[RMDB]
Chemical mapping of a 207-nucleotide RNA with DMS and 2A3. Conditions: 150 mM KOAc, 10 mM MgCl2 and 150 mM bicine (pH 8.5), 24 C. For 2A3 the reverse transcriptase was SuperScript II with manganese.

RNA sequence: GGGAACGACUCGAGUAGAGUCGAAAACAUUACGAGUUCAGUCGCAAAUUGUAGAAUUAGCUACUCUACGAUUUAGUGAGCGUUAGUAACGUUGUAAUAUAAUAUAGUCUUUGGAAGGAUUAUAUUGGAGCCGCGGACAAGUUCGCUUGUCCGCGAACAAAACCAUACUGUUCGCAGUAUGGUUUUGAAAAGAAACAACAACAACAAC
Reactivity to DMS in 0.01 (KOAc 150mM, MgCl2 10mM, bicine 150mM(pH8.5), 24C), signal-to-noise 3, nucleotides 027 to 156: c030a060u000u000a020c010g010a130g000u000u000c020a090g010u000c080g040c050a040a030a050u000u010g010u010a030g010a070a090u000u000a220g020c190u010a080c070u000c000u000a000c000g000a010u000u000u010a100g010u010g000a030g010c040g000u000u000a160g000u000a020a030c040g020u000u000g010u000a060a120u000a160u010a040a040u000a040u000a020g020u000c010u000u010u000g010g010a300a280g010g000a020u000u000a020u000a010u000u000g000g000a210g000c100c030g050c000g030g020a040c000a030a040g000u000u010c300g020c000u000u000g010u000c010c010g030c000g010a000a040
Reactivity to 2A3 in 0.01 (KOAc 150mM, MgCl2 10mM, bicine 150mM(pH8.5), 24C), signal-to-noise 4, nucleotides 027 to 156: c040a050u110u170a050c050g030a030g100u070u130c050a050g040u060c020g010c020a000a000a010u000u000g000u000a000g010a050a040u060u030a040g040c030u050a030c020u000c000u000a000c000g010a010u010u000u100a070g020u000g030a100g060c020g030u070u120a070g020u060a080a030c050g010u010u020g010u040a110a050u080a060u010a140a000u000a000u000a020g000u000c030u040u090u140g180g040a110a080g030g000a000u000u000a000u010a000u000u020g030g020a050g100c050c010g000c020g000g000a000c000a010a000g000u040u110c160g050c150u000u000g000u000c000c000g000c000g000a000a000